[RMDB]
RNA sequence: GGGAACGACUCGAGUAGAGUCGAAAACGUAGGACAAACCGAAGCGAAAGCUGUCGUCCAGUACGUUUCCGGUGAUCAAGGACGUAAGCCGGAGGAGCAAAGGUGAUUAGAGACCCCUGUAGUUCCGGAUAAGUCGGGAUUUCGAUCCCGACUUAUCAAAAGAAACAACAACAACAAC
Reactivity to DMS in 0.01 (KOAc 150mM, MgCl2 10mM, bicine 150mM(pH8.5), 24C), signal-to-noise 6, nucleotides 027 to 126: c040g020u000a040g020g010a040c040a090a070a120c190c130g010a230a020g000c010g000a110a090a160g000c010u010g000u010c110g000u010c010c000a110g020u000a030c020g000u010u000u000c000c000g020g010u020g010a100u030c100a120a160g020g000a110c130g010u010a110a250g020c020c000g000g000a100g010g020a080g010c050a080a120a060g000g010u020g000a100u010u010a130g010a140g010a130c040c030c020c010u010g010u010a180g000u010u000c010c020g020
Reactivity to 2A3 in 0.01 (KOAc 150mM, MgCl2 10mM, bicine 150mM(pH8.5), 24C), signal-to-noise 6, nucleotides 027 to 126: c010g010u020a030g020g040a000c030a050a120a020c080c040g060a060a000g010c010g030a100a020a020g010c010u050g040u190c050g000u000c020c000a020g120u020a010c030g000u000u020u050c020c030g010g020u070g020a060u210c080a090a090g110g060a060c090g060u080a070a020g010c000c000g030g010a050g010g020a010g020c020a010a050a040g060g030u090g020a070u050u140a040g040a030g010a090c010c010c010c000u010g040u090a060g000u050u000c000c010g020